[RMDB]
RNA sequence: GGGAACGACUCGAGUAGAGUCGAAAAGGAAGAUUAAUAUAUGGUUUAGAAGUCCCUGAUCCAAUAGAAGCAAUGAUUGGCUUUCUCAUUCUUGGGAGUGAAAAUUGUCUACUCUGUGAUUCAGGAAAGCACGCUAAUGAUUCGUCAUUAGCGUGCUAAAAGAAACAACAACAACAAC
Reactivity to 2A3 in 0.01 (KOAc 150mM, MgCl2 10mM, bicine 150mM(pH8.5), 24C), signal-to-noise 1, nucleotides 027 to 126: g040g040a080a060g030a180u250u100a210a070u170a030u050a050u220g020g120u060u070u100a080g040a100a000g090u080c100c010c000u040g000a060u030c010c000a000a020u090a080g060a060a000g000c020a040a040u040g010a130u030u060g150g010c000u040u100u040c000u010c000a160u280u130c040u180u130g150g000g010a010g000u050g060a000a150a000a000u040u060g000u010c000u000a050c010u020c040u050g080u090g050a050u260u090c000a000g000g060a010a080
Reactivity to DMS in 0.01 (KOAc 150mM, MgCl2 10mM, bicine 150mM(pH8.5), 24C), signal-to-noise 1, nucleotides 027 to 126: g000g010a120a080g000a090u000u030a030a060u010a150u000a090u000g000g010u010u000u000a090g000a070a130g000u010c020c010c000u010g000a090u000c000c020a030a150u000a040g020a070a110g000c040a020a020u000g000a150u000u000g010g000c030u000u010u000c020u000c060a040u000u000c140u000u010g010g000g030a040g000u000g010a030a080a070a040u000u000g000u000c020u000a090c040u000c100u000g000u000g020a080u000u020c040a020g000g020a020a070

An RNA of 177 nucleotides, treated with 2A3 and DMS and read out base by base. For 2A3 the reverse transcriptase was SuperScript II with manganese. DMS adducts were read by reverse transcription with MarathonRT. Source: RMDB library OK2TRN, as collected in RNAgym. Reactivities are rounded to 0.1 and cut off at 0 and 3. The 2A3 profile rests on 581 reads. The reactions ran in a buffer of 150 mM KOAc, 10 mM MgCl2 and 150 mM bicine (pH 8.5), at 24 C.